[RMDB]
The record gives the reactivity of an RNA of 177 nucleotides to DMS and 2A3. 2A3 adducts were read by reverse transcription with SuperScript II with manganese. It was measured as part of the RMDB library RFM100. For DMS, 1,710 sequencing reads were counted. DMS adducts were read by reverse transcription with MarathonRT. The reactions ran in a buffer of 150 mM KOAc, 10 mM MgCl2 and 150 mM bicine (pH 8.5), at 24 C. As a SHAPE reagent, 2A3 marks flexible, mostly unpaired nucleotides at the ribose 2'-OH.
RNA sequence: GGGAACGACUCGAGUAGAGUCGAAAACGGGGAUAGAUCCUCUGCAGACGACUGAAAUGACCAAGCGGGUCGUGUAAGCGGUCAAGUAGCCUAGUUGUUACGAGUCGCUGAGCGUCAGCCCGAUCCUAGGUGAGGGCUGGUUCGCCAGCCCUCACCUAAAAGAAACAACAACAACAAC
Reactivity to DMS in 0.01 (KOAc 150mM, MgCl2 10mM, bicine 150mM(pH8.5), 24C), signal-to-noise 1, nucleotides 027 to 126: c200g000g000g010g000a090u020a060g000a080u050c180c010u010c070u000g020c020a020g040a120c000g010a040c060u050g000a080a050a010u000g000a020c030c100a130a170g030c080g020g020g040u010c000g000u010g010u090a110a010g020c030g000g000u000c000a080a300g000u000a030g010c000c080u010a060g000u110u010g010u000u000a000c030g000a300g000u000c000g030c000u000g030a100g000c160g000u010c070a010g000c030c000c000g000a000u030c030c010u000
Reactivity to 2A3 in 0.01 (KOAc 150mM, MgCl2 10mM, bicine 150mM(pH8.5), 24C), signal-to-noise 2, nucleotides 027 to 126: c020g010g040g030g000a050u110a080g050a080u080c040c020u090c020u000g000c000a010g010a080c010g000a000c000u050g030a030a070a050u080g030a040c000c040a150a080g090c120g080g030g060u150c050g060u050g030u010a020a020g030c020g010g060u140c050a080a040g020u010a030g000c030c010u100a040g000u100u170g010u000u000a000c000g000a010g000u000c010g030c030u020g020a020g020c030g020u010c020a040g030c000c000c000g030a070u030c020c040u020